[RMDB]
RNA sequence: GGGAACGACUCGAGUAGAGUCGAAAAAAAAAAAGAUAUGGAGACGCUACCCACCGCAUGAACUACAGCGUAACCAUCGGAAACGAUGGGAGAAGCUGCAUGCGAGGCGUCUCCUAAGUCAAAAAAAUCAUUACUCUAUGUUCGCAUAGAGUAAUGAAAAAGAAACAACAACAACAAC
Reactivity to DMS in 0.01 (KOAc 150mM, MgCl2 10mM, bicine 150mM(pH8.5), 24C), signal-to-noise 2, nucleotides 027 to 126: a000a000a010a040a050a070a120g020a040u030a270u000g000g000a030g000a020c000g020c010u010a040c040c000c020a300c150c020g000c000a010u000g010a080a030c150u020a300c020a000g000c040g000u010a090a290c000c000a000u000c000g000g000a090a090a160c010g020a000u000g000g000g010a070g000a070a120g000c000u010g010c000a020u000g010c020g000a040g010g000c000g000u000c020u000c000c000u010a000a040g010u030c090a020a000a040a090a030a140a100
Reactivity to 2A3 in 0.01 (KOAc 150mM, MgCl2 10mM, bicine 150mM(pH8.5), 24C), signal-to-noise 1, nucleotides 027 to 126: a060a000a110a020a020a020a150g140a120u300a010u200g000g000a000g000a010c000g000c000u060a180c000c040c050a030c010c000g000c040a000u010g010a120a040c120u240a110c300a000g020c000g000u020a010a020c000c000a000u000c000g020g020a040a060a060c030g040a000u020g020g030g000a020g000a010a010g000c010u000g000c010a000u010g020c000g000a000g000g010c000g000u000c010u000c000c000u010a030a020g000u020c020a090a020a030a000a000a000a260
Source information: Source: RMDB library TTRDES, as collected in RNAgym. An RNA of 177 nucleotides, treated with DMS and 2A3 and read out base by base. Values cover nucleotides 27 to 126. 2A3 adducts were read by reverse transcription with SuperScript II with manganese. For 2A3, 2,233 sequencing reads were counted. DMS (dimethyl sulfate) methylates the pairing face of unpaired adenines and cytosines. The reactions ran in a buffer of 150 mM KOAc, 10 mM MgCl2 and 150 mM bicine (pH 8.5), at 24 C.